The record gives the reactivity of an RNA of 207 nucleotides to DMS and 2A3. For DMS the reverse transcriptase was MarathonRT. It was measured as part of the RMDB library OK3TST. The RNA was probed in 150 mM KOAc, 10 mM MgCl2 and 150 mM bicine (pH 8.5) at 24 C.
RNA sequence: GGGAACGACUCGAGUAGAGUCGAAAAGGACGUGCUGUCGCGUCCGAAUUAACGACAGCAACUAGCCUGUCACCAACCAGGCGAAUUAUGUUGGUGGAAUGAGGCGAAAGCCUCUAUCAGACUGGGACAUAGCAGUCGAAUUAUCUAUGUCAUUAGAGAUCCACCUAUACUUCGGUAUAGGUGGAUCAAAAGAAACAACAACAACAAC
Reactivity to DMS in 0.01 (KOAc 150mM, MgCl2 10mM, bicine 150mM(pH8.5), 24C), signal-to-noise 1, nucleotides 027 to 156: g000g000a100c050g070u000g060c050u030g000u000c000g020c000g050u000c170c100g040a030a110u000u000a120a050c040g030a000c000a050g040c000a040a090c120u010a150g000c000c040u000g000u000c020a260c070c090a160a100c100c030a060g010g000c040g010a100a040u000u050a190u000g000u010u010g000g030u020g080g010a180a160u000g000a000g000g000c000g030a140a140a300g020c000c000u010c020u000a050u000c060a150g000a020c030u000g040g000g040a020c000a020u000a050g000c060a100g020u000c010g000a100a150u000u000a100u000c010u010a140u000g010u000c030a140u050u000a080g000a300
Reactivity to 2A3 in 0.01 (KOAc 150mM, MgCl2 10mM, bicine 150mM(pH8.5), 24C), signal-to-noise 2, nucleotides 027 to 156: g010g000a000c010g010u050g000c010u000g000u000c000g000c000g030u000c010c010g000a020a040u170u070a020a020c020g000a000c000a000g010c000a020a020c040u070a010g000c000c000u000g000u050c000a000c000c000a000a010c000c000a000g000g000c030g000a040a070u250u220a120u090g000u000u000g010g000u040g010g040a030a030u100g000a000g000g010c010g030a060a020a000g020c000c000u040c010u030a040u100c020a000g000a000c000u000g000g050g000a000c000a010u000a010g000c000a000g000u020c100g030a070a070u180u070a040u130c000u000a010u010g000u000c000a020u050u160a060g050a020